[RMDB]
RNA sequence: GGGAACGACUCGAGUAGAGUCGAAAACGUGCUGUCACGUUCUCGGUACCCUCGAUUUCCGUCUCUUCUUGCAUGCGUAUCCAACCGCCUCGCGGCUCCGCCGACCCCCAUGGACCGCGCUGCGGCAGUGAUACUAGCUCUUCGGAGCUAGUAUCACAAAAGAAACAACAACAACAAC
Reactivity to 2A3 in 0.01 (KOAc 150mM, MgCl2 10mM, bicine 150mM(pH8.5), 24C), signal-to-noise 1, nucleotides 027 to 126: c030g010u000g070c130u250g270u300c030a010c020g000u050u020c050u020c010g090g040u070a070c040c040c010u010c040g130a120u020u050u060c020c040g030u010c000u000c010u100u020c000u010u050g060c040a090u120g000c000g020u050a130u000c040c010a000a040c000c000g000c010c010u000c000g020c000g000g050c100u020c020c000g070c030c020g130a130c010c000c000c010c000a000u010g020g010a030c000c000g000c020g000c000u010g020c000g020g000c000a020
Reactivity to DMS in 0.01 (KOAc 150mM, MgCl2 10mM, bicine 150mM(pH8.5), 24C), signal-to-noise 1, nucleotides 027 to 126: c000g070u010g010c300u000g000u000c020a060c040g000u000u010c040u000c010g000g020u000a040c080c100c000u000c060g010a110u010u010u000c050c020g020u010c000u000c010u000u000c030u000u000g000c070a000u000g000c050g000u020a120u000c030c070a140a220c030c020g010c000c060u000c050g000c010g000g020c100u000c050c010g000c110c090g030a300c060c000c000c000c020a110u000g000g020a120c020c010g010c000g000c070u000g020c000g010g020c100a040
Structure probing data (2A3 and DMS) for a 177-nucleotide construct.
For DMS the reverse transcriptase was MarathonRT.
For 2A3 the reverse transcriptase was SuperScript II with manganese.
Conditions: 150 mM KOAc, 10 mM MgCl2 and 150 mM bicine (pH 8.5), 24 C.
Source: RMDB library RFMREP, as collected in RNAgym.